[RMDB]
RNA sequence: GGGAACGACUCGAGUAGAGUCGAAAAGGUAGCAGACCGGCGGACGCGGUGCCCGCGGAUCCCGGGUGCUGCGGCUUAUGGAGGCGGCCCUCCCAAGAGCGGCGGCCGCAGAGGCAUCCAGCCCUCAAAUAGCAUAGGUAUUCGUACCUAUGCUAUUAAAAGAAACAACAACAACAAC
Reactivity to 2A3 in 0.01 (KOAc 150mM, MgCl2 10mM, bicine 150mM(pH8.5), 24C), signal-to-noise 9, nucleotides 027 to 126: g030g010u040a020g020c030a030g040a240c010c010g010g010c050g020g010a010c000g010c000g010g030u080g050c030c030c000g010c070g050g040a150u160c040c010c000g000g000g000u020g000c000u000g000c000g000g000c000u070u050a050u090g030g020a040g050g040c020g010g010c000c010c010u080c020c010c010a090a050g070a010g040c130g020g000c020g020g000c010c010g000c020a040g030a040g090g000c010a030u070c040c020a050g020c010c000c000u030c020a030
Reactivity to DMS in 0.01 (KOAc 150mM, MgCl2 10mM, bicine 150mM(pH8.5), 24C), signal-to-noise 9, nucleotides 027 to 126: g000g010u010a110g020c010a050g010a110c000c000g000g000c100g010g000a090c010g000c010g000g020u010g010c090c020c000g020c120g010g000a110u020c110c050c000g010g000g010u010g010c000u000g020c010g000g010c020u010u000a190u060g010g000a240g010g010c020g010g000c010c010c030u000c010c040c070a130a130g000a060g000c120g020g010c300g000g000c010c010g000c120a040g010a110g000g010c040a120u020c090c090a140g010c020c010c000u000c050a080